[RMDB]
RNA sequence: GGGAACGACUCGAGUAGAGUCGAAAAGAUGCGAGAAAACAUCAAAGUACGAUGGCAAAAACGGCUGAAUGUCCCUGUCCGUGCGCACGAAGACGUACUUGUUCUCAAAUCAGAAUUUAAUACCGCAGCCAUCGUUUAAGUUCGCUUAAACGAUGGCAAAAGAAACAACAACAACAAC
Reactivity to DMS in 0.01 (KOAc 150mM, MgCl2 10mM, bicine 150mM(pH8.5), 24C), signal-to-noise 3, nucleotides 027 to 126: g010a030u000g000c300g000a030g020a060a040a120a140c200a130u080c090a110a040a030g020u000a000c000g000a140u020g000g000c000a050a120a050a070a020c010g000g000c120u060g010a070a070u020g000u020c080c070c020u020g000u030c000c000g000u000g000c120g010c000a070c170g000a060a070g020a080c000g010u010a010c000u000u000g010u010u000c000u010c020a050a300a060u010c010a060g040a100a100u030u010u020a120a150u070a170c020c040g000c150a180
Reactivity to 2A3 in 0.01 (KOAc 150mM, MgCl2 10mM, bicine 150mM(pH8.5), 24C), signal-to-noise 5, nucleotides 027 to 126: g040a000u020g010c020g010a020g040a000a090a100a180c100a120u180c110a120a080a000g020u000a000c020g030a090u140g100g000c020a060a070a030a120a020c020g040g000c020u070g120a250a050u240g140u270c060c040c000u010g040u020c030c000g030u010g010c000g010c000a120c130g160a150a040g110a030c010g010u000a000c000u030u060g040u000u010c000u000c000a020a030a010u040c020a020g030a020a020u060u120u130a160a090u130a120c000c080g000c110a010

An RNA of 177 nucleotides, treated with DMS and 2A3 and read out base by base. For DMS the reverse transcriptase was MarathonRT. Conditions: 150 mM KOAc, 10 mM MgCl2 and 150 mM bicine (pH 8.5), 24 C. Reactivities are given for positions 27 through 126. The data come from the RNA Mapping Database (RMDB), library OK1LIB. For DMS, 3,913 sequencing reads were counted.